Structure probing data (2A3 and DMS) for a 177-nucleotide construct. For DMS, 3,509 sequencing reads were counted. The reactions ran in a buffer of 150 mM KOAc, 10 mM MgCl2 and 150 mM bicine (pH 8.5), at 24 C. For 2A3, 3,945 sequencing reads were counted. It was measured as part of the RMDB library 15KREP.

RNA sequence: GGGAACGACUCGAGUAGAGUCGAAAACAAGUACAUGAGGUUGCUGCUGUAAGAAGUGUUACUGUCGAGUACAACAUUCAUGCUGUAUUAGACACACUACUUGCUUCUUCUAGUCUUAGAACCUUUGACAUUUAAAAUCGUUCGCGAUUUUAAAUGUAAAAGAAACAACAACAACAAC
Reactivity to 2A3 in 0.01 (KOAc 150mM, MgCl2 10mM, bicine 150mM(pH8.5), 24C), signal-to-noise 3, nucleotides 027 to 126: c030a030a030g100u110a070c060a120u120g020a010g030g010u040u040g090c020u020g020c010u020g020u080a010a000g000a010a000g020u010g040u170u070a070c070u030g010u030c010g010a010g010u010a000c000a010a000c000a040u080u280c050a030u130g000c010u000g000u010a010u010u010a020g020a000c000a000c020a000c020u060a030c030u070u090g020c000u000u010c000u020u000c020u050a010g020u010c030u030u050a050g020a070a030c000c000u020u010u050g040
Reactivity to DMS in 0.01 (KOAc 150mM, MgCl2 10mM, bicine 150mM(pH8.5), 24C), signal-to-noise 4, nucleotides 027 to 126: c040a100a140g010u020a120c180a080u000g010a020g000g010u000u000g020c050u000g000c030u000g020u000a040a020g000a020a000g020u000g010u010u010a090c200u000g010u000c020g000a110g020u000a000c000a010a010c000a040u000u010c300a080u000g020c050u000g020u000a000u000u000a210g000a020c000a060c090a080c130u000a030c060u000u010g000c000u000u000c000u000u000c030u000a040g010u000c140u000u010a070g000a070a050c090c000u000u000u000g020